[RMDB]
RNA sequence: GGGAACGACUCGAGUAGAGUCGAAAAGUGAAGUGAUGGAUAAUGGUGUUAGUGAUGGGCCUGUCAAUCAGCCACCGAUGUGCCAUAUUGACAGAGACAUAGACAUCGGUGUCAUAGAUCUACGACAGUGCCUAUGGUAGUUCGCUACCAUAGGCACAAAAGAAACAACAACAACAAC
Reactivity to 2A3 in 0.01 (KOAc 150mM, MgCl2 10mM, bicine 150mM(pH8.5), 24C), signal-to-noise 2, nucleotides 027 to 126: g080u040g060a040a020g010u020g090a080u090g070g000a070u070a170a080u130g050g010u020g050u130u060a090g010u020g150a070u020g060g030g070c040c000u000g010u020c000a010a050u010c000a000g020c040c010a010c020c050g020a040u050g030u060g110c030c010a100u100a080u180u090g030a050c020a060g160a000g010a090c010a050u040a030g040a010c000a000u010c000g000g040u010g000u020c010a020u060a110g050a040u040c050u080a040c050g060a000c000a020
Reactivity to DMS in 0.01 (KOAc 150mM, MgCl2 10mM, bicine 150mM(pH8.5), 24C), signal-to-noise 4, nucleotides 027 to 126: g020u000g010a130a080g010u000g030a060u000g010g010a070u010a070a070u000g000g030u000g010u000u020a050g020u000g020a090u000g000g010g020c060c000u010g000u000c010a050a040u010c080a300g000c130c010a030c010c030g020a010u000g000u010g000c050c030a060u000a120u000u010g020a120c160a080g000a120g000a040c090a040u000a070g010a040c010a000u000c000g010g010u000g000u000c030a050u000a110g010a070u000c070u010a050c140g000a030c050a060
Annotation: The record gives the reactivity of an RNA of 177 nucleotides to 2A3 and DMS. DMS adducts were read by reverse transcription with MarathonRT. The reactions ran in a buffer of 150 mM KOAc, 10 mM MgCl2 and 150 mM bicine (pH 8.5), at 24 C. Source: RMDB library OK2TST, as collected in RNAgym. The 2A3 profile rests on 2,029 reads. Values cover nucleotides 27 to 126.